[RMDB]
RNA sequence: GGGAACGACUCGAGUAGAGUCGAAAAGAACGAGACUCCGCCUGCAAUCCCGGCACGUCGGGAGGCCGAGGCCGGCGGAUCACUUGCGGUUAGGGGCUGGAGACCGGCCUGGCCAACACAGCGAAAACCGUAAUAAUCGAUUCGUCGAUUAUUACGGAAAAGAAACAACAACAACAAC
Reactivity to 2A3 in 0.01 (KOAc 150mM, MgCl2 10mM, bicine 150mM(pH8.5), 24C), signal-to-noise 4, nucleotides 027 to 126: g040a070a030c040g010a010g050a100c030u010c030c000g020c010c010u020g000c020a030a120u050c020c000c000g020g020c060a050c100g150u140c020g050g030g020a090g020g000c020c020g110a030g030g000c000c010g000g000c000g040g010a000u050c020a020c030u060u150g050c040g020g080u090u110a080g050g020g000g020c040u040g050g020a110g030a080c000c020g000g000c000c010u010g000g010c000c000a000a010c050a000c020a020g070c010g080a040a080a010a070
Reactivity to DMS in 0.01 (KOAc 150mM, MgCl2 10mM, bicine 150mM(pH8.5), 24C), signal-to-noise 5, nucleotides 027 to 126: g010a110a150c060g000a120g010a130c110u000c040c030g010c040c020u000g000c040a170a120u000c020c030c010g000g000c080a070c110g010u000c060g020g010g000a140g010g010c010c030g000a050g010g010c030c030g000g000c030g000g000a050u000c080a060c060u000u010g000c060g010g010u000u000a100g030g010g010g020c060u010g010g010a150g010a130c000c020g000g000c020c010u010g010g000c010c020a080a110c120a070c090a060g010c040g000a060a090a080a120